[RMDB]
RNA sequence: GGGAACGACUCGAGUAGAGUCGAAAAUACUGGAUUUUUGACAAAUAGGUAAUCCCUAACAAAUAGCUGUAUACUUUUGUUUCAGGUUAUUGAAAUCCAGCGAAAAGAGGAGGUCAAGAAGCCAGAAAUUUAUCGUCCAGUUCGCUGGACGAUAAAUAAAAGAAACAACAACAACAAC
Reactivity to DMS in 0.01 (KOAc 150mM, MgCl2 10mM, bicine 150mM(pH8.5), 24C), signal-to-noise 3, nucleotides 027 to 126: u060a070c020u000g000g000a050u000u000u000u000u000g000a040c030a070a170a060u020a110g000g020u020a140a040u030c100c050c300u010a050a140c110a070a050a030u040a060g020c100u000g010u000a070u040a110c080u010u040u010u000g000u000u020u010c300a070g020g000u010u000a070u000u000g020a070a110a080u000c020c050a050g030c100g000a080a050a080a090g010a130g000g000a110g000g000u000c020a000a050g030a000a090g010c030c010a020g010a150a040
Structure probing data (DMS) for a 177-nucleotide construct. For DMS, 2,658 sequencing reads were counted. DMS adducts were read by reverse transcription with MarathonRT.